[RMDB]
RNA sequence: GGGAACGACUCGAGUAGAGUCGAAAACAGGAAACUGGUUAAUCGUUUUCCUUGGUGGUAUAGCGGAAACCAUAAAUAAGAAGAACUCUAAGUGCUUGAGUAGAGUUAAAAUAAUUAGACAGGCAAUUAAGGUACUCCACGUUCGCGUGGAGUACAACACUCUACAUUCCUUCGGGAAUGUAGAGUGAAAAGAAACAACAACAACAAC
Reactivity to 2A3 in 0.01 (KOAc 150mM, MgCl2 10mM, bicine 150mM(pH8.5), 24C), signal-to-noise 6, nucleotides 027 to 156: c040a010g040g080a090a030a050c080u130g030g070u110u150a130a130u140c040g010u010u010u050u080c010c020u040u070g090g020u070g010g010u080a050u090a120g050c040g010g030a040a050a020c030c000a010u100a120a090a010u160a080a060g100a060a010g030a040a020c000u000c000u010a010a000g020u050g230c010u010u000g000a000g010u000a000g010a000g020u120u150a010a010a000a000u090a020a010u200u000a010g000a010c000a000g010g000c000a010a030u150u150a150a050g070g000u000a000c000u000c000c000a000c010g010u040u050c160g010c000g100u000g000g000a000g000u000a000c000a000a000
Reactivity to DMS in 0.01 (KOAc 150mM, MgCl2 10mM, bicine 150mM(pH8.5), 24C), signal-to-noise 1, nucleotides 027 to 156: c030a090g010g000a040a080a120c060u010g000g040u000u010a080a130u000c070g070u000u000u000u000c010c010u000u020g000g050u000g000g020u000a070u000a030g040c050g000g040a160a100a060c000c000a120u000a050a040a170u010a110a130g000a160a140g000a050a080c010u000c010u000a030a110g030u000g000c080u010u020g000a120g020u000a060g000a100g000u000u000a010a040a040a040u000a050a070u000u010a080g000a300c030a030g000g010c000a080a060u010u020a070a100g010g030u000a020c000u010c000c000a020c000g000u010u010c270g070c010g050u000g010g000a000g030u000a010c010a050a100
Conditions: 150 mM KOAc, 10 mM MgCl2 and 150 mM bicine (pH 8.5), 24 C. An RNA of 207 nucleotides, treated with 2A3 and DMS and read out base by base. It was measured as part of the RMDB library M2RFPK.